[RMDB]
This 207-nucleotide RNA was probed chemically with 2A3.
The 2A3 profile rests on 783 reads.
The RNA was probed in 150 mM KOAc, 10 mM MgCl2 and 150 mM bicine (pH 8.5) at 24 C.
Values cover nucleotides 27 to 156.

RNA sequence: GGGAACGACUCGAGUAGAGUCGAAAAUCACCAGAUGCUGCAUCACCUGAUCACUGAUGGCUCAACGGUAUCCGGCGGUACAACUGAAUACUUGUAGCUGCCUUUUGAGCGGGUUGGCCGCAAUCCGAAAAGAGGACACACUUCGGUGUGUCCUCAACCCUCAUGGAAGGUUCGCCUUCCAUGAGGGAAAAGAAACAACAACAACAAC
Reactivity to 2A3 in 0.01 (KOAc 150mM, MgCl2 10mM, bicine 150mM(pH8.5), 24C), signal-to-noise 1, nucleotides 027 to 156: u110c010a020c060c010a000g020a030u030g010c040u000g010c000a140u020c000a040c000c010u080g030a010u060c010a030c040u100g080a090u050g110g000c000u010c080a000a100c050g010g010u030a050u030c070c020g010g000c050g090g050u150a140c060a070a010c100u090g090a150a090u130a120c070u070u110g050u050a030g060c030u020g020c000c010u010u030u000u100g030a020g000c020g000g000g010u100u050g070g000c040c000g000c000a020a030u010c000c000g010a060a110a000a080g030a000g000g000a000c000a000c000a010c000u030u100c060g030g000u000g000u000g000u030c000c000u000c000a000a000